[RMDB]
This 177-nucleotide RNA was probed chemically with 2A3. 2A3 adducts were read by reverse transcription with SuperScript II with manganese.
RNA sequence: GGGAACGACUCGAGUAGAGUCGAAAAGCAGCCGGUGCUCGUCCAGGGUGGCCAACGCGACGUCGGAGGCACCCAACAGCGCCGCCUCGCGCAGCCGCAACGCGUGUGGCACCAGCACCGCGCGCAAACUCGGGGGUUCGUUCGCGAACCCCCGAGUAAAAGAAACAACAACAACAAC
Reactivity to 2A3 in 0.01 (KOAc 150mM, MgCl2 10mM, bicine 150mM(pH8.5), 24C), signal-to-noise 1, nucleotides 027 to 126: g070c110a010g000c000c010g000g000u000g000c000u040c130g020u000c120c080a140g010g050g000u020g110g280c000c020a000a000c010g060c010g200a300c080g150u300c000g060g000a060g010g000c030a000c030c000c020a070a060c120a060g000c000g060c010c000g050c000c000u060c070g020c040g000c000a060g030c000c110g080c070a000a040c020g020c010g000u060g000u080g030g030c000a020c060c030a000g010c000a020c000c000g000c000g000c000g000c020a040a000